Source: RMDB library TTRDES, as collected in RNAgym. This 177-nucleotide RNA was probed chemically with DMS and 2A3. DMS adducts were read by reverse transcription with MarathonRT. 2A3 adducts were read by reverse transcription with SuperScript II with manganese.
[RMDB]
RNA sequence: GGGAACGACUCGAGUAGAGUCGAAAAGAUAUGGAUUGCAGAAGCACGAUAAGCUGAUUAUCGGAAACGAUAAGCAGCUUUUGACGUGCCUGCAAUCCUAAGUCAAACAUACGGUUCGCCGUAUGAAUCUUACACGCAAGUUCGCUUGCGUGUAAGAAAAAGAAACAACAACAACAAC
Reactivity to DMS in 0.01 (KOAc 150mM, MgCl2 10mM, bicine 150mM(pH8.5), 24C), signal-to-noise 3, nucleotides 027 to 126: g000a000u000a300u020g000g000a010u000u000g000c010a010g000a230a230g030c000a010c000g010a180u000a020a000g010c000u000g010a040u000u000a000u000c000g020g010a040a050a150c000g040a010u010a010a000g000c000a020g010c000u010u000u000u020g010a120c090g010u000g010c000c000u000g000c000a000a000u000c010c000u000a000a050g010u000c010a150a180a250c010a000u010a010c000g000g000u000u010c280g040c010c000g000u000a000u000g010a100a180
Reactivity to 2A3 in 0.01 (KOAc 150mM, MgCl2 10mM, bicine 150mM(pH8.5), 24C), signal-to-noise 2, nucleotides 027 to 126: g000a010u070a010u110g020g000a000u000u000g000c020a030g110a300a100g060c010a010c040g150a130u040a300a020g010c000u000g000a060u010u010a000u000c000g030g040a050a020a020c010g000a000u000a000a000g020c000a000g020c000u010u000u000u010g030a020c040g000u000g000c000c000u000g010c000a000a000u010c000c000u010a040a000g010u010c030a060a030a150c000a010u000a000c000g010g090u080u100c300g020c120c000g010u000a000u020g010a010a040
Annotation:
Values cover nucleotides 27 to 126. The reactions ran in a buffer of 150 mM KOAc, 10 mM MgCl2 and 150 mM bicine (pH 8.5), at 24 C.